[RMDB]
RNA sequence: GGGAACGACUCGAGUAGAGUCGAAAACUGCUAGCGGUGAGGUGGAUGUCGUCUUUGGGUGUGGGUACCACACGCUUGAAUAACGGGAGGAGCGCUGGCGGCGUGUGCCGGUCGCUGCUCUGUAGGGGGUGGUCCGGUGGUUCGUCGCCGGACUACCAAAAGAAACAACAACAACAAC
Reactivity to 2A3 in 0.01 (KOAc 150mM, MgCl2 10mM, bicine 150mM(pH8.5), 24C), signal-to-noise 2, nucleotides 027 to 126: c010u020g000c000u000a030g010c000g050g000u050g010a060g000g010u000g030g030a070u020g010u050c140g020u020c080u030u050u080g010g030g000u060g010u090g000g010g100u080a150c000c000a000c020a000c010g110c000u030u140g200a170a060u170a130a010c010g070g000g010a000g010g040a000g010c040g000c000u050g020g000c010g010g040c090g010u140g060u100g010c000c010g040g060u180c290g000c000u080g000c030u000c010u020g070u090a190g030g070g020
Annotation:
Chemical mapping of a 177-nucleotide RNA with 2A3. For 2A3 the reverse transcriptase was SuperScript II with manganese. The RNA was probed in 150 mM KOAc, 10 mM MgCl2 and 150 mM bicine (pH 8.5) at 24 C. The 2A3 profile rests on 768 reads.